RNA sequence: GGGAACGACUCGAGUAGAGUCGAAAAUAGGCAGGAAGUGACAGAGAAGUAUCCAGAUUCUGCCUUCUGGAGGCUCAACUUCAGAAUCCAAGCACUUAACCGUGUCACACAUUGCUGCUCACAUCAAGGGAGGGUCCAAAAUGUCUCUAUGGAAAGAGCUAAUUAGCUACUUCGGUAGCUAAUUAGCAAAAGAAACAACAACAACAAC
Reactivity to DMS in 0.01 (KOAc 150mM, MgCl2 10mM, bicine 150mM(pH8.5), 24C), signal-to-noise 2, nucleotides 027 to 156: u000a040g020g000c050a050g020g030a070a110g020u010g010a140c040a080g000a120g000a110a080g020u000a060u000c040c020a150g000a190u000u000c030u000g010c010c110u000u000c010u030g020g000a110g010g020c080u000c190a050a110c010u010u000c010a050g000a070a100u000c040c060a030a140g020c050a230c040u000u000a060a110c120c060g020u010g000u010c060a060c070a070c130a120u010u000g030c000u000g010c020u020c010a090c040a090u000c050a090a070g000g000g010a070g000g000g000u010c050c030a010a070a070a120u000g010u000c040u000c030u000a130u000g000g000a100a080a050g010a150
Reactivity to 2A3 in 0.01 (KOAc 150mM, MgCl2 10mM, bicine 150mM(pH8.5), 24C), signal-to-noise 5, nucleotides 027 to 156: u070a000g000g000c000a000g020g060a090a070g040u030g030a040c040a020g080a030g050a160a020g060u070a080u050c040c020a010g020a080u070u030c010u070g020c000c000u010u020c020u010g010g000a010g020g000c030u030c190a060a070c020u060u040c020a000g040a010a010u010c030c010a060a010g020c010a030c050u050u070a050a030c040c020g060u020g030u100c020a000c000a000c020a090u040u160g010c020u020g000c000u040c010a050c020a100u110c060a060a040g030g010g020a060g020g020g020u020c030c020a040a060a030a040u090g020u000c020u020c010u060a060u080g060g040a070a080a040g050a020